[RMDB]
RNA sequence: GGGAACGACUCGAGUAGAGUCGAAAACGGGCAAACGAGACAUCGAUCUGGCGCUGGAUGCUGCGCACAAAGUGAAAGAUAAAUGGGCGCAUACUUCGGUGCAGGAGCGCGCGGCGAUUCUGUUUAAACUUACUACGCUUUUCGAAGCGUAGUAAGUAAAAGAAACAACAACAACAAC
Reactivity to DMS in 0.01 (KOAc 150mM, MgCl2 10mM, bicine 150mM(pH8.5), 24C), signal-to-noise 5, nucleotides 027 to 126: c070g010g020g010c070a060a090a110c080g010a080g010a070c120a090u010c060g000a070u010c010u000g000g030c030g020c020u000g020g020a040u010g020c180u000g000c010g020c010a030c030a020a060a230g010u000g010a090a150a100g000a100u000a030a080a160u000g000g000g010c010g020c020a030u000a100c100u000u000c040g020g010u000g020c030a100g010g000a070g010c050g030c060g010c030g000g000c030g000a060u000u000c040u000g010u000u010u010a060a090
Reactivity to 2A3 in 0.01 (KOAc 150mM, MgCl2 10mM, bicine 150mM(pH8.5), 24C), signal-to-noise 4, nucleotides 027 to 126: c020g020g020g010c050a060a060a020c080g020a040g030a060c040a070u050c040g050a050u050c030u040g090g000c020g000c030u020g030g010a020u050g020c040u020g030c010g010c020a040c030a040a090a010g110u150g080a170a080a030g120a030u210a120a130a050u070g020g010g000c020g000c020a010u040a080c010u030u070c040g010g000u040g020c010a030g030g030a030g020c040g000c020g000c000g050g000c010g020a010u080u020c020u020g090u030u090u140a110a100